[RMDB]
The data come from the RNA Mapping Database (RMDB), library M2RFPK. Chemical mapping of a 207-nucleotide RNA with 2A3 and DMS. For 2A3 the reverse transcriptase was SuperScript II with manganese.
RNA sequence: GGGAACGACUCGAGUAGAGUCGAAAACGGAAGCAUUAAAACCAUUUGAGCUAGUCAAUGCGUGGCGUGUCUCUCCGCAGCGUGUUGGCGAAUGUAAAGAGUGACUAAGCAUGUAGUACCGAGGAUGAUAAGAGCAAUUCGUUCGCGAAUUGCUCAAGCUGCAAUAUCAGUUCGCUGAUAUUGCAGCAAAAGAAACAACAACAACAAC
Reactivity to 2A3 in 0.01 (KOAc 150mM, MgCl2 10mM, bicine 150mM(pH8.5), 24C), signal-to-noise 4, nucleotides 027 to 156: c040g040g050a080a020g050c040a070u100u160a050a020a020a110c050c040a060u050u060u170g110a080g020c040u060a020g010u000c000a010a010u020g010c020g020u050g090g000c000g010u040g020u020c020u010c010u010c090c010g010c020a030g000c010g000u010g000u020u020g010g000c010g010a020a010u080g020u080a030a090a000g040a020g010u020g000a010c030u050a040a000g030c010a050u070g040u120a040g030u020a060c010c070g010a040g050g010a040u090g020a030u080a140a170g000a000g020c000a000a000u000u000c010g020u020u010c130g000c010g040a000a000u000u000g000c000u000c000a000a000
Reactivity to DMS in 0.01 (KOAc 150mM, MgCl2 10mM, bicine 150mM(pH8.5), 24C), signal-to-noise 1, nucleotides 027 to 156: c030g030g030a130a170g000c030a060u000u020a040a040a080a110c000c030a220u000u020u010g010a180g030c060u020a150g000u010c000a030a050u020g000c030g040u020g030g050c050g020u000g000u000c040u000c050u000c140c040g020c000a020g000c030g000u000g010u000u020g000g020c000g000a110a050u020g010u000a060a050a060g000a070g030u010g010a070c040u000a110a100g010c090a090u000g000u000a110g000u000a140c080c020g000a150g000g010a090u000g030a140u020a110a140g020a030g040c010a010a000u000u000c000g050u020u000c300g010c040g000a000a010u000u000g000c000u000c010a000a070
Source information:
DMS adducts were read by reverse transcription with MarathonRT. 2A3 is a SHAPE reagent: it acylates the 2'-hydroxyl of flexible nucleotides of all four kinds.